[RMDB]
RNA sequence: GGGAACGACUCGAGUAGAGUCGAAAAAGCGUACCAUCGAGAAGUUCGAGAAGGAGGCCCAGGAGAUGGGAAAGGGAUCCUUCAAGUACGCCUGGGUUUUGGAUAAGUUGAAGGCUGAGCGCGAGCGCGCACCGUAGCGUUUCGACGCUACGGUGCGAAAAGAAACAACAACAACAAC
Reactivity to 2A3 in 0.01 (KOAc 150mM, MgCl2 10mM, bicine 150mM(pH8.5), 24C), signal-to-noise 1, nucleotides 027 to 126: a000g070c040g020u000a040c030c010a040u050c020g060a020g040a190a100g210u140u050c050g050a020g010a090a010g020g030a040g010g180c000c000c000a050g070g000a300g030a090u300g040g000g110a000a040a000g110g000g000a060u020c020c030u000u040c070a000a090g000u040a030c050g080c000c000u090g050g000g000u070u080u150u120g000g000a090u050a060a140g070u070u050g060a040a010g070g020c060u060g010a000g050c000g000c010g080a050g000c020g000
Reactivity to DMS in 0.01 (KOAc 150mM, MgCl2 10mM, bicine 150mM(pH8.5), 24C), signal-to-noise 1, nucleotides 027 to 126: a040g000c030g000u000a100c020c300a190u150c000g000a030g000a150a110g000u010u000c000g000a220g100a160a020g000g000a070g000g000c000c000c030a000g100g080a090g140a080u100g000g050g000a110a070a130g050g000g000a300u000c020c030u000u000c030a040a160g000u000a000c100g000c010c020u010g000g000g000u000u000u000u050g030g000a030u000a000a080g000u000u000g000a060a070g010g000c010u000g000a050g000c010g000c010g010a060g000c090g000